[RMDB]
RNA sequence: GGGAACGACUCGAGUAGAGUCGAAAAAUCGCUAAGAUCUGGACUCAAGUGCCCAUCAACAGAUGAACAGGUAAAGAAAAUAUGGUAUAUAUACAUGAUGGAAGCUUCAAAAAGAAGGAAAUCCAGCCAUAUGGAUGUACCUGGAGACCAUUAUGUAGCUACCAUAUAGGUUCGCCUAUAUGGUAGCAAAAGAAACAACAACAACAAC
Reactivity to 2A3 in 0.01 (KOAc 150mM, MgCl2 10mM, bicine 150mM(pH8.5), 24C), signal-to-noise 3, nucleotides 027 to 156: a010u090c030g000c030u030a010a090g000a090u020c030u060g040g030a050c040u010c060a080a040g040u090g090c060c020c000a070u050c030a030a130c020a050g080a080u070g010a090a040c020a030g020g000u070a080a060a040g070a040a110a030a000u040a010u030g000g050u030a080u010a010u020a010u030a180c030a060u120g030a020u020g030g030a060a030g060c000u030u000c030a120a130a090a030a050g060a030a020g010g020a030a070a020u000c000c000a000g020c030c020a030u040a020u050g010g010a000u050g020u040a020c000c000u000g020g000a020g020a020c000c000a040u090u080a040u160g050u050a010
Reactivity to DMS in 0.01 (KOAc 150mM, MgCl2 10mM, bicine 150mM(pH8.5), 24C), signal-to-noise 1, nucleotides 027 to 156: a100u000c020g000c000u020a090a160g040a160u000c020u000g010g000a120c030u000c090a240a300g010u000g000c070c040c060a090u020c040a090a190c040a040g000a100u010g000a090a110c040a020g000g000u000a030a040a090g020a170a100a070a060u000a050u000g000g010u000a020u000a130u000a160u010a120c050a090u010g000a070u000g020g000a070a180g000c000u000u000c010a060a090a120a240a100g020a130a030g000g000a030a100a110u000c010c000a050g010c000c220a060u000a070u000g000g000a100u020g000u000a060c030c010u000g000g000a080g000a120c030c000a040u000u000a040u000g000u000a110